[RMDB]
RNA sequence: GGGAACGACUCGAGUAGAGUCGAAAAGAUAUGGACGUUCUGUGAGGGAGUUCCGUCAGUCGGAAACGACUGAUGGAACAUCGAUCUCACAGAGACGUCCUAAGUCAAAACGCAGCUUCGGCUGCGAGUCUAACUUGUAGUUCGCUACAAGUUAGACAAAAGAAACAACAACAACAAC
Reactivity to 2A3 in 0.01 (KOAc 150mM, MgCl2 10mM, bicine 150mM(pH8.5), 24C), signal-to-noise 5, nucleotides 027 to 126: g020a020u100a050u180g000g000a000c000g010u020u000c010u000g010u000g010a000g000g030g010a060g010u000u000c000c010g010u000c000a000g000u000c000g030g030a100a070a080c020g010a010c000u000g010a000u010g000g010a000a000c010a020u090c010g020a050u010c000u000c000a000c000a000g020a000g010a000c000g000u000c000c000u000a040a010g010u000c020a020a030a100a140c030g000c000a000g000c000u160u160c300g240g000c000u000g000c000g000a010
Reactivity to DMS in 0.01 (KOAc 150mM, MgCl2 10mM, bicine 150mM(pH8.5), 24C), signal-to-noise 6, nucleotides 027 to 126: g000a050u020a300u000g000g000a010c010g030u000u000c000u000g020u000g010a030g000g000g000a050g010u000u000c000c000g020u000c000a000g010u000c000g010g000a130a100a240c000g010a010c010u000g000a000u000g000g010a000a000c000a100u000c200g000a080u010c000u010c000a010c000a010g000a030g010a010c010g010u000c000c000u000a000a070g010u010c060a090a070a120a190c030g010c000a000g020c000u000u010c240g040g010c000u000g000c010g000a020